Chemical mapping of a 177-nucleotide RNA with DMS and 2A3. 2A3 adducts were read by reverse transcription with SuperScript II with manganese. The reactions ran in a buffer of 150 mM KOAc, 10 mM MgCl2 and 150 mM bicine (pH 8.5), at 24 C. It was measured as part of the RMDB library OK1LIB. For 2A3, 14,620 sequencing reads were counted.
[RMDB]
RNA sequence: GGGAACGACUCGAGUAGAGUCGAAAAAUGCUGAUGCAGUCGGGACCUAUUCAACGGGCGCUGGCCUGAUAUAGUACGGGACUAUGGACGUCAGCGCUUCAGCAGCUCAUUUCCGCUUUGGCGUCGAUCUUGGGACGGGGUUCGCCCCGUUCCAAGGAAAAGAAACAACAACAACAAC
Reactivity to DMS in 0.01 (KOAc 150mM, MgCl2 10mM, bicine 150mM(pH8.5), 24C), signal-to-noise 7, nucleotides 027 to 126: a050u030g010c030u000g000a090u030g010c050a060g010u010c030g010g010g000a100c040c030u010a060u030u010c140a110a090c120g000g000g010c010g010c040u000g010g000c010c010u010g020a240u050a020u000a010g010u000a130c210g010g010g000a230c010u000a030u020g000g010a210c300g010u000c000a000g010c030g000c020u000u000c030a050g000c050a040g010c040u010c080a100u010u000u010c000c010g020c080u000u000u000g010g000c060g000u010c020g000a070
Reactivity to 2A3 in 0.01 (KOAc 150mM, MgCl2 10mM, bicine 150mM(pH8.5), 24C), signal-to-noise 4, nucleotides 027 to 126: a000u050g000c010u030g010a020u050g010c030a010g020u020c010g000g000g030a020c000c000u020a050u040u090c060a040a030c020g000g000g000c000g000c010u010g020g000c000c010u060g030a010u020a000u000a030g030u030a040c080g040g010g020a010c000u000a000u030g030g010a000c000g000u000c000a000g000c000g000c000u030u010c000a010g000c010a000g000c000u000c020a050u020u020u000c000c000g010c020u030u010u060g030g000c000g010u030c000g020a040
The DMS profile rests on 18,330 reads.